This 207-nucleotide RNA was probed chemically with 2A3 and DMS. Conditions: 150 mM KOAc, 10 mM MgCl2 and 150 mM bicine (pH 8.5), 24 C. For 2A3 the reverse transcriptase was SuperScript II with manganese.
[RMDB]
RNA sequence: GGGAACGACUCGAGUAGAGUCGAAAAAGCAGGAGUACGCUCCUGCAUGGGUAGACGAAUAGACCCCAACUGAAGUUCAAUUCUAACGUUAAAAGGAGUUUUAUAUGACUGGACGUACGCGUCCAGAUGACGAUUUCAUUCUUCGGAAUGAAAUCAAGGUAUUCAUACGGUUCGCCGUAUGAAUACCAAAAGAAACAACAACAACAAC
Reactivity to 2A3 in 0.01 (KOAc 150mM, MgCl2 10mM, bicine 150mM(pH8.5), 24C), signal-to-noise 2, nucleotides 027 to 156: a020g000c000a000g020g010a030g010u010a080c170g010c100u010c000c000u000g000c000a000u010g020g000g020u050a040g030a060c050g030a080a010u060a070g050a060c000c040c000c000a000a040c080u100g060a030a010g090u140u060c020a050a080u090u000c030u120a050a120c130g120u110u110a030a040a010a080g060g020a130g040u030u020u120u060a140u040a090u160g100a070c000u000g000g010a000c000g010u100a020c250g010c030g110u000c000c000a000g000a000u070g020a010c150g000a000u000u000u010c000a000u000u010c000u010u020c080g080g000a000a000u000g000a000a010a000u000c000a000a030
Reactivity to DMS in 0.01 (KOAc 150mM, MgCl2 10mM, bicine 150mM(pH8.5), 24C), signal-to-noise 1, nucleotides 027 to 156: a140g020c020a000g000g000a020g070u000a130c260g010c010u000c010c000u000g030c010a000u010g000g000g020u000a070g040a200c080g010a130a100u000a190g000a080c030c030c000c040a060a170c090u000g010a090a100g000u020u000c060a040a140u000u000c030u010a040a090c070g000u000u000a120a010a110a110g000g010a070g010u000u000u000u000a070u000a090u070g020a140c000u000g000g030a020c000g010u000a040c230g040c150g040u000c000c010a020g010a030u000g050a090c150g010a020u000u020u000c010a040u000u000c000u000u010c300g000g020a060a010u010g000a000a000a000u000c000a050a060

Source information:
Reactivities are given for positions 27 through 156. The 2A3 profile rests on 1,035 reads.